[RMDB]
RNA sequence: GGGAACGACUCGAGUAGAGUCGAAAAAGCAGCUAGCAUCCAGUCAAUGCUCACAUACAACCCUCAGACAGUCAAGCUUGCAAACAUUACAAACUUUCAGUCUGAUGGUAUCAAAUAUGACUUAUCCUCCAUACUACCUGUGUCAACUGGAUCCAGGGGUUAUUCCAUCGUUCGCGAUGGAAUAACCAAAAGAAACAACAACAACAAC
Reactivity to 2A3 in 0.01 (KOAc 150mM, MgCl2 10mM, bicine 150mM(pH8.5), 24C), signal-to-noise 1, nucleotides 027 to 156: a020g080c070a000g020c060u080a000g030c000a000u000c040c010a010g040u040c050a000a070u040g000c020u020c020a080c000a020u180a100c070a020a030c000c000c010u010c000a000g000a000c000a000g020u050c090a070a000g030c000u040u010g060c070a100a160a100c020a200u180u300a050c040a030a030a010c010u050u080u130c030a000g000u000c010u000g000a050u040g000g000u000a060u060c030a000a140a020u150a080u060g070a030c030u100u160a070u140c000c000u050c070c020a050u070a100c020u060a080c060c020u000g000u000g030u070c000a040a000c140u030g010g010a020u000c000c000a000g100g000